[RMDB]
Record summary
Chemical mapping of a 177-nucleotide RNA with 2A3 and DMS. Source: RMDB library OK2TST, as collected in RNAgym. 2A3 adducts were read by reverse transcription with SuperScript II with manganese.

RNA sequence: GGGAACGACUCGAGUAGAGUCGAAAAUUUACGCUAGGCACCACCUACGUCGACGAUCACGUGCGAACGGAGAGCUCCUCGAUGUAUAUCGGUUUCAUGUACAGCAUGGGAGCGUUUGGACCAGUGAUGCAUGGACCAUAUUCGUAUGGUCCAUGCAAAAAGAAACAACAACAACAAC
Reactivity to 2A3 in 0.01 (KOAc 150mM, MgCl2 10mM, bicine 150mM(pH8.5), 24C), signal-to-noise 1, nucleotides 027 to 126: u070u080u080a010c040g000c000u040a060g070g000c080a060c030c000a020c010c030u050a040c050g000u030c030g040a090c010g000a050u070c060a010c060g010u090g070c060g040a100a040c030g080g030a130g030a010g060c030u010c000c000u020c030g010a040u020g020u030a010u010a000u060c070g000g050u060u160u160c070a040u040g000u010a070c000a020g090c020a050u280g000g000g000a000g040c000g010u000u050u050g000g000a000c020c020a000g020u030g120a070
Reactivity to DMS in 0.01 (KOAc 150mM, MgCl2 10mM, bicine 150mM(pH8.5), 24C), signal-to-noise 2, nucleotides 027 to 126: u020u020u010a050c050g010c110u000a070g010g010c040a120c020c040a150c110c050u010a070c060g000u010c030g010a040c080g030a110u000c080a040c070g020u000g020c080g010a080a070c010g000g000a150g000a210g010c030u000c000c000u010c240g000a060u000g000u000a030u000a000u000c120g010g000u000u000u000c040a030u010g000u000a010c030a040g020c050a080u000g000g000g000a010g010c010g000u000u000u000g000g020a150c040c090a080g010u000g010a100